Record summary:
Chemical mapping of a 207-nucleotide RNA with 2A3. Conditions: 150 mM KOAc, 10 mM MgCl2 and 150 mM bicine (pH 8.5), 24 C. It was measured as part of the RMDB library ARCHII. 2A3 adducts were read by reverse transcription with SuperScript II with manganese. As a SHAPE reagent, 2A3 marks flexible, mostly unpaired nucleotides at the ribose 2'-OH.
RNA sequence: GGGAACGACUCGAGUAGAGUCGAAAAGCACUAAGCUGGCCGUCAAUAUGGGUGUCACGGAGGAGUCCGAGACAUUCAGGUUGGCUAAGGAGAGACACACCGAGCGAGGGGUGAAAACCAGCAGCUAAGAGUCUCCGCGGCAAGCAGUAGUGGGAUCGACCCAGACUCGGUUCGCCGAGUCUGGGUCAAAAGAAACAACAACAACAAC
Reactivity to 2A3 in 0.01 (KOAc 150mM, MgCl2 10mM, bicine 150mM(pH8.5), 24C), signal-to-noise 1, nucleotides 027 to 156: g210c000a000c040u090a040a040g060c000u080g080g000c000c010g020u010c000a070a110u100a050u160g020g020g000u060g000u010c000a000c010g020g000a020g080g080a050g160u030c000c000g010a010g000a020c000a010u010u000c000a010g040g020u050u050g030g000c010u040a000a040g040g020a040g000a000g030a020c000a000c000a020c040c010g030a010g010c000g010a050g010g030g010g000u040g080a020a020a000a020c000c000a000g040c000a000g000c040u040a050a010g020a010g010u000c000u020c010c000g000c000g000g000c010a010a010g010c010a030g060u060a000g000u000g000g040g070a060u040c040